[RMDB]
RNA sequence: GGGAACGACUCGAGUAGAGUCGAAAAACACAAUUUUCAUUGUUGUUGAUCAAGGUGGACCUACAUUAGCUUUUGUGGCUAAAAUAUGUGGGUCCUGUUUGGCGAUAGUCAUUUCGAGGACCGAGAGCCAUAACAUUAUGUUCGCAUAAUGUUAUGGAAAAGAAACAACAACAACAAC
Reactivity to 2A3 in 0.01 (KOAc 150mM, MgCl2 10mM, bicine 150mM(pH8.5), 24C), signal-to-noise 3, nucleotides 027 to 126: a000c060a030c060a120a060u150u180u240u250c100a050u030u050g050u000u020g020u010u060g060a130u060c030a050a000g100g000u040g030g010a000c000c000u010a000c000a050u020u010a010g020c030u110u080u160u300g220u220g050g010c020u030a010a000a060a110u240a050u040g010u000g030g020g000u020c000c000u010g000u000u030u010g030g000c030g050a090u090a130g010u030c010a040u050u120u140c100g060a100g040g040a030c010c010g030a040g020a010g140
Reactivity to DMS in 0.01 (KOAc 150mM, MgCl2 10mM, bicine 150mM(pH8.5), 24C), signal-to-noise 6, nucleotides 027 to 126: a050c070a090c160a060a060u010u010u000u010c170a150u000u000g000u010u000g010u000u000g000a130u010c050a070a160g010g010u000g010g010a020c000c000u000a010c000a040u010u000a020g010c000u000u000u000u010g010u010g000g020c000u000a040a030a080a120u000a070u000g010u000g010g000g000u000c000c000u000g000u000u000u000g010g010c010g010a130u010a070g010u010c090a100u000u000u000c060g010a110g010g000a080c040c020g010a210g000a160g000
Annotation:
This 177-nucleotide RNA was probed chemically with 2A3 and DMS. Values are in units of 0.01, from 0 to 300, in steps of 10. The DMS profile rests on 8,622 reads. Conditions: 150 mM KOAc, 10 mM MgCl2 and 150 mM bicine (pH 8.5), 24 C. The data come from the RNA Mapping Database (RMDB), library RFMREP.